Annotation: An RNA of 177 nucleotides, treated with DMS and read out base by base. Values cover nucleotides 27 to 126.
[RMDB]
RNA sequence: GGGAACGACUCGAGUAGAGUCGAAAAGAUAUGGAUAUCAACGCCGUAUCUUGUAGACAUGCGAGAAGGGUCGGAAACGACCCGGAUCGCAACAGCUACAAGAUACGGCGUUGAGUAUCCUAAGUCACGACAAUGGUAUGUUCGCAUACCAUUGUCGAAAAGAAACAACAACAACAAC
Reactivity to DMS in 0.01 (KOAc 150mM, MgCl2 10mM, bicine 150mM(pH8.5), 24C), signal-to-noise 1, nucleotides 027 to 126: g000a020u000a300u010g000g010a010u000a020u000c000a010a000c020g020c000c000g000u000a030u000c000u020u000g060u030a000g000a060c120a170u000g000c000g000a000g020a300a300g000g000g000u000c020g000g010a160a090a300c000g000a000c000c000c000g010g000a300u000c000g030c000a000a030c300a100g040c000u000a010c000a000a020g000a020u000a000c000g050g000c000g020u000u000g000a030g030u000a000u000c000c000u000a000a080g000u000c080a240
It was measured as part of the RMDB library TTRINS.